[RMDB]
The record gives the reactivity of an RNA of 177 nucleotides to 2A3. The RNA was probed in 150 mM KOAc, 10 mM MgCl2 and 150 mM bicine (pH 8.5) at 24 C. For 2A3, 265 sequencing reads were counted.
RNA sequence: GGGAACGACUCGAGUAGAGUCGAAAAAACUAUAACACAUAUAUGUAAAAUUUGUGAAUAAUUUUCUAACAUUUUGUCAGAUGAAGAAACAACAAAAAUAAAAGUUUUAGAUCUUGAUGAGUUAUUCAUCUAUCGUAACCUUCGGGUUACGAUAGAUAAAAGAAACAACAACAACAAC
Reactivity to 2A3 in 0.01 (KOAc 150mM, MgCl2 10mM, bicine 150mM(pH8.5), 24C), signal-to-noise 1, nucleotides 027 to 126: a000a000c250u280a190u240a150a040c050a000c050a000u090a030u080a050u300g060u190a040a110a040a070u030u000u080g000u000g030a090a090u020a010a010u100u000u130u000c030u060a090a020c050a130u040u040u040u150g020u000c000a030g000a000u000g000a090a120g030a030a020a000c030a000a000c020a000a160a000a060a000u090a120a080a190a140g000u000u000u000u000a060g020a050u000c030u130u060g000a000u060g000a000g000u050u110a020u030u020c000